[RMDB]
RNA sequence: GGGAACGACUCGAGUAGAGUCGAAAACGCCGCAGUCAUCCACGCUCGACACUCCGGUACACCUCCACCGCAGGUCCUCGAUGUAGAGGCAUGGACCGACUUCGCCGCGGCGGGGCUCGACCGUGAGCCGAAAGGAACAAUUCGUUGUUCCUUUCGGAAAAGAAACAACAACAACAAC
Reactivity to 2A3 in 0.01 (KOAc 150mM, MgCl2 10mM, bicine 150mM(pH8.5), 24C), signal-to-noise 3, nucleotides 027 to 126: c050g010c010c020g000c030a030g010u040c010a030u000c020c000a020c040g030c030u060c030g060a020c010a010c080u000c020c010g020g000u090a060c030a040c060c000u040c030c010a080c010c030g030c050a030g000g050u040c000c030u050c080g040a080u160g040u180a070g050a050g130g000c010a030u070g020g010a030c040c020g030a030c000u130u070c100g060c080c040g010c020g030g000c000g000g000g010g000c040u060c050g060a050c010c000g050u090g050a020g040
Reactivity to DMS in 0.01 (KOAc 150mM, MgCl2 10mM, bicine 150mM(pH8.5), 24C), signal-to-noise 5, nucleotides 027 to 126: c110g030c030c030g020c040a070g020u010c040a150u000c020c020a050c060g020c030u010c040g000a120c110a110c050u000c060c020g010g000u010a090c150a100c150c000u000c030c060a040c070c040g040c080a090g020g000u000c020c010u000c090g010a100u010g000u000a060g010a100g000g010c040a060u000g000g000a030c080c020g010a070c090u000u000c070g000c070c060g010c040g020g020c020g010g000g020g000c070u000c040g010a080c040c060g000u000g000a080g020
Source: RMDB library OK2TRN, as collected in RNAgym.
An RNA of 177 nucleotides, treated with 2A3 and DMS and read out base by base.
For DMS the reverse transcriptase was MarathonRT.
For 2A3 the reverse transcriptase was SuperScript II with manganese.
The DMS profile rests on 7,121 reads.